An RNA of 170 nucleotides, treated with 2A3 and DMS and read out base by base. For 2A3, 45,035 sequencing reads were counted. For 2A3 the reverse transcriptase was SuperScript II with manganese. For DMS, 36,330 sequencing reads were counted.
RNA sequence: GGGAACGACUCGAGUAGAGUCGAAAAGGUGAACCCGCUCUUGUGAGGCCUCUUCAUAGGUCCGGAGUCGACCUCCAUCUGAUCUGUUCGGGCCCUCUUCGCCGGGGGAGCUCCCUCCCCGUCCUUCCACGCCAAUGGUUCGCCAUUGGCAAAAGAAACAACAACAACAAC
Reactivity to 2A3 in 0.01 (KOAc 150mM, MgCl2 10mM, bicine 150mM(pH8.5), 24C), signal-to-noise 9, nucleotides 027 to 129: g060g010u060g040a030a030c000c000c010g030c010u050c020u070u140g040u050g050a090g010g030c010c010u070c040u190u070c050a120u100a130g000g010u010c020c030g030g010a020g010u090c050g080a130c010c010u030c010c010a070u060c100u110g040a050u010c010u050g090u070u090c040g000g000g010c000c030c000u010c030u070u080c040g050c070c010g010g000g000g000g010a020g010c020u050c020c000c000u030c010c010c000c000g040u060c010c000u060u030c030c020a060c080
Reactivity to DMS in 0.01 (KOAc 150mM, MgCl2 10mM, bicine 150mM(pH8.5), 24C), signal-to-noise 6, nucleotides 027 to 129: g050g040u050g000a110a080c030c000c090g000c070u060c000u040u050g050u000g020a140g010g000c020c000u070c000u060u040c020a080u020a100g000g000u040c020c100g030g030a010g010u020c000g000a100c100c020u050c040c050a080u020c150u030g000a060u000c030u030g020u010u010c170g000g040g000c040c060c040u040c010u000u000c020g050c220c000g000g000g000g000g000a160g020c090u030c040c040c010u000c030c010c040c040g030u050c000c000u000u000c040c030a030c180